[RMDB]
RNA sequence: GGGAACGACUCGAGUAGAGUCGAAAAACAGCGAAAGGCACAAGACUUCGAACAUUAUAGCAAUUAGUAGUUGCCUAAACCCAUUGCAAUAUAUGGGACAGUAGAGGUCGCAAGCCUAUACUGUGCGAAAAGUCGCAAGGUUUCGACCUUGCGACAAACAUCAACGUAUCUUCGGAUACGUUGAUGUAAAAGAAACAACAACAACAAC
Reactivity to 2A3 in 0.01 (KOAc 150mM, MgCl2 10mM, bicine 150mM(pH8.5), 24C), signal-to-noise 3, nucleotides 027 to 156: a000c040a000g010c010g100a300a050a030g020g030c020a020c020a040a040g030a030c020u030u010c060g030a050a010c010a120u120u140a050u180a120g000c010a010a030u070u030a070g150u110a010g010u070u010g010c000c000u080a130a060a130c010c000c000a000u020u010g010c020a000a030u040a000u000a010u180g000g000g000a000c010a000g020u020a020g000a010g000g010u010c010g010c100a000a030g000c000c000u000a000u020a010c010u000g000u020g030c010g070a020a030a030a100g000u000c000g010c000a000a010g020g000u060u080u170c180g000a050c000c000u000u000g000c000g000a000c000a000a000
Reactivity to DMS in 0.01 (KOAc 150mM, MgCl2 10mM, bicine 150mM(pH8.5), 24C), signal-to-noise 2, nucleotides 027 to 156: a050c030a060g070c040g010a090a050a130g020g010c050a090c060a080a180g000a030c020u000u000c050g000a100a170c070a090u000u000a130u010a100g080c000a020a050u000u000a170g050u020a210g010u010u000g000c000c050u000a090a110a210c040c000c010a050u000u000g010c010a160a140u000a100u000a020u010g000g010g020a080c020a050g040u000a130g000a010g010g020u000c050g030c260a170a300g000c000c000u010a030u000a030c000u000g000u020g000c000g000a080a070a110a110g000u000c000g040c010a000a020g040g010u010u000u010c300g000a090c000c000u030u000g010c000g030a000c010a020a050